[RMDB]
RNA sequence: GGGAACGACUCGAGUAGAGUCGAAAACAUUCAUCUAACAGCAAACCCUCCAUUUGGGGUUAAGUCUCUACAAAGCUUUUUGGAGUAUGCUGAAAACCUUUCACAAAAUCAGUUCAUUGACCAAGAACCUCGUACCACUGUUCGCAGUGGUACGAGGAAAAGAAACAACAACAACAAC
Reactivity to 2A3 in 0.01 (KOAc 150mM, MgCl2 10mM, bicine 150mM(pH8.5), 24C), signal-to-noise 2, nucleotides 027 to 126: c000a050u150u080c000a090u110c080u160a150a160c020a020g050c080a020a020a020c010c020c000u000c090c050a170u000u000u300g020g010g000g000u030u030a050a020g100u000c000u010c000u080a000c050a020a160a210g150c080u190u240u000u000u010g050g000a000g000u080a060u020g000c000u030g000a110a000a060a060c000c000u070u170u200c120a130c010a090a150a140a130u120c020a000g060u090u160c060a060u000u110g110a010c000c070a070a000g040a090a050
Structure probing data (2A3) for a 177-nucleotide construct. The reactions ran in a buffer of 150 mM KOAc, 10 mM MgCl2 and 150 mM bicine (pH 8.5), at 24 C. The 2A3 profile rests on 683 reads.